About this RNA: The data come from the RNA Mapping Database (RMDB), library OK3TST. An RNA of 207 nucleotides, treated with 2A3 and read out base by base. 2A3 adducts were read by reverse transcription with SuperScript II with manganese. The reactions ran in a buffer of 150 mM KOAc, 10 mM MgCl2 and 150 mM bicine (pH 8.5), at 24 C. Reactivities are given for positions 27 through 156. The 2A3 profile rests on 320 reads.

[RMDB]
RNA sequence: GGGAACGACUCGAGUAGAGUCGAAAAGAACGUUAUGCGGCGGAACCUCUUGGGCCCAGUGUCUGGCCUGAGCAACCGUCGUCCAAGUUCGGUACCAGGUUAACAAUAAAUAGCUUUAAUAGGUUACGAGAAGACUUCGAACGACGGGACAUUAUCCGCUCAGCAGUCUAUUCGUAGACUGCUGAGCAAAAGAAACAACAACAACAAC
Reactivity to 2A3 in 0.01 (KOAc 150mM, MgCl2 10mM, bicine 150mM(pH8.5), 24C), signal-to-noise 1, nucleotides 027 to 156: g040a140a000c010g010u000u180a110u300g040c010g020g000c000g000g040a090a150c010c010u000c100u090u060g000g050g000c080c030c080a130g160u130g000u190c280u090g050g000c000c000u020g000a000g000c010a020a090c000c000g000u030c000g000u000c000c000a140a000g000u040u030c020g000g000u000a000c000c000a000g000g090u110u050a050a120c050a120a000u160a160a070a110u210a070g030c030u170u080u140a170a060u030a210g040g030u000u050a020c070g020a090g040a240a000g050a100c010u110u040c120g000a040a040c010g100a000c030g010g090g020a000c000a090u020u130a030u240c020c020